[RMDB]
RNA sequence: GGGAACGACUCGAGUAGAGUCGAAAAAAGUCACAACGCCGUCAGACACCGAGGGCGUGGCGCGUGCCUUCCGCGAAGUGAGUGAGGCCGUGCCACCGGAUGAGGUAUUAGACCGACUCACCGCCGCCCGUGUGGCGUAUGUCGGGGCGAGUGGCGAACGGAAGUACACGUUCGCGUGUACUUCCGUAAAAGAAACAACAACAACAAC
Reactivity to 2A3 in 0.01 (KOAc 150mM, MgCl2 10mM, bicine 150mM(pH8.5), 24C), signal-to-noise 2, nucleotides 027 to 156: a000a000g060u100c060a080c040a150a040c030g000c030c020g020u010c000a030g030a100c000a000c020c030g080a240g000g000g060c000g000u050g000g000c000g010c010g090u260g000c000c000u080u060c050c020g000c060g020a120a130g080u120g130a090g040u180g030a000g010g000c000c000g000u000g000c000c000a040c030c020g020g030a220u030g000a000g020g080u080a080u100u250a100g080a080c110c040g000a000c030u000c020a010c010c000g080c030c010g000c000c010c010g100u120g040u090g050g010c010g030u010a000u040g000u000c000g000g000g000g040c000g000a020g000u000g000g000c000g000a020

Structure probing data (2A3) for a 207-nucleotide construct.
Values cover nucleotides 27 to 156.
The reactions ran in a buffer of 150 mM KOAc, 10 mM MgCl2 and 150 mM bicine (pH 8.5), at 24 C.
The 2A3 profile rests on 777 reads.
For 2A3 the reverse transcriptase was SuperScript II with manganese.